[RMDB]
RNA sequence: GGGAACGACUCGAGUAGAGUCGAAAAUGCGGCUGGAGGCAUCCCUGUGGAUGCUGCCAGACGAUCCUAUGGACGUAGACCAGUGGUUCGACCUGGACAUGUCCAACUGGAGCAUGGUGGUCAAGCCCGUACUCGGACUAUUCGUAGUCCGAGUACGAAAAGAAACAACAACAACAAC
Reactivity to 2A3 in 0.01 (KOAc 150mM, MgCl2 10mM, bicine 150mM(pH8.5), 24C), signal-to-noise 2, nucleotides 027 to 126: u140g020c010g010g000c000u010g000g010a010g040g000c000a010u040c020c020c030u090g170u300g020g000a000u000g010c000u000g040c000c000a000g000a010c010g000a010u020c020c000u030a080u060g050g000a010c060g050u080a040g020a140c030c000a040g030u080g130g000u120u090c080g030a130c020c000u050g020g060a040c000a010u050g030u000c020c010a060a170c150u180g010g010a040g000c030a070u060g020g010u050g010g000u040c000a040a000g030c000c000
Reactivity to DMS in 0.01 (KOAc 150mM, MgCl2 10mM, bicine 150mM(pH8.5), 24C), signal-to-noise 3, nucleotides 027 to 126: u010g010c000g010g010c010u000g020g020a100g010g020c000a010u000c000c000c260u010g000u020g030g020a020u010g020c000u000g000c000c000a020g010a010c030g000a120u000c020c000u000a060u000g010g020a070c050g010u000a130g000a120c030c010a030g000u010g010g000u000u000c240g010a110c060c020u010g030g000a160c050a040u000g030u010c010c000a070a140c210u010g000g030a100g010c030a030u000g000g000u000g010g000u000c060a080a100g000c050c030